This 177-nucleotide RNA was probed chemically with DMS and 2A3.

RNA sequence: GGGAACGACUCGAGUAGAGUCGAAAAGAAAGAAAGAAAGGGGAGGUAAGGUCGGCGAUAGCCCCUCCGGCCGAAACGAUGAGGCUCACGUAAGUGGGGUGGGAUGGAGUAGGCCGGGGCUCCCCAAAUACAGUAUACUAUUCGUAGUAUACUGUAUAAAAGAAACAACAACAACAAC
Reactivity to DMS in 0.01 (KOAc 150mM, MgCl2 10mM, bicine 150mM(pH8.5), 24C), signal-to-noise 9, nucleotides 027 to 126: g010a110a090a100g000a100a090a100g010a070a110a140g010g010g010g010a010g010g020u000a010a020g000g010u020c050g040g000c030g010a140u040a110g010c000c000c010c010u000c000c000g000g000c000c000g000a080a120a130c020g000a130u020g000a230g000g000c010u000c010a010c010g010u050a080a120g010u000g000g000g000g000u010g010g020g010a170u040g000g010a070g010u000a090g000g000c000c000g000g010g000g000c000u000c000c000c000c010a000a020
Reactivity to 2A3 in 0.01 (KOAc 150mM, MgCl2 10mM, bicine 150mM(pH8.5), 24C), signal-to-noise 9, nucleotides 027 to 126: g080a000a040a000g110a030a070a010g110a070a110a050g000g000g000g000a010g010g010u010a010a010g060g020u070c040g000g000c030g120a190u170a060g010c000c000c000c000u000c000c000g000g000c000c000g000a010a010a010c010g030a050u200g060a050g130g040c010u010c010a010c020g070u200a120a150g020u090g030g020g020g110u140g040g050g000a070u200g020g000a010g010u010a010g010g000c000c000g000g000g000g000c000u000c010c000c000c000a000a000